[RMDB]
Structure probing data (DMS and 2A3) for a 177-nucleotide construct.
2A3 adducts were read by reverse transcription with SuperScript II with manganese.
It was measured as part of the RMDB library OK2TST.
DMS adducts were read by reverse transcription with MarathonRT.
For 2A3, 3,646 sequencing reads were counted.
The DMS profile rests on 4,839 reads.

RNA sequence: GGGAACGACUCGAGUAGAGUCGAAAACUUGACGGUGUGCCGCUCACCGAUCUGGAUGUGCUCGUGUUACGUCGGCGGGUCGGCCUGGUUGCGCAGGCUCCCGUGGUGCUUACCGAUGCGGUGCUCAAUGGCACGUAUAGUUCGCUAUACGUGCCAUAAAAGAAACAACAACAACAAC
Reactivity to DMS in 0.01 (KOAc 150mM, MgCl2 10mM, bicine 150mM(pH8.5), 24C), signal-to-noise 3, nucleotides 027 to 126: c030u000u000g010a070c010g000g000u000g010u010g010c010c020g000c050u010c000a020c010c010g010a090u000c040u000g000g010a100u010g000u010g010c040u000c050g030u000g010u000u010a040c100g020u000c040g020g020c030g000g020g020u010c290g010g000c010c010u000g000g000u000u010g000c250g000c010a030g010g010c020u010c010c000c020g010u000g000g010u010g000c110u010u000a130c030c070g000a090u010g010c030g020g010u000g000c090u000c170a120
Reactivity to 2A3 in 0.01 (KOAc 150mM, MgCl2 10mM, bicine 150mM(pH8.5), 24C), signal-to-noise 3, nucleotides 027 to 126: c020u020u050g050a030c020g020g010u040g080u130g040c000c020g000c010u030c000a020c010c010g230a300u020c040u040g110g050a140u120g060u080g080c030u070c070g140u180g040u120u080a040c030g020u030c040g090g030c000g010g010g000u110c100g020g000c000c000u010g000g070u160u210g050c200g000c030a010g000g000c010u070c010c000c000g000u020g020g010u070g000c040u070u100a060c000c000g040a060u180g010c010g000g010u030g070c050u040c100a060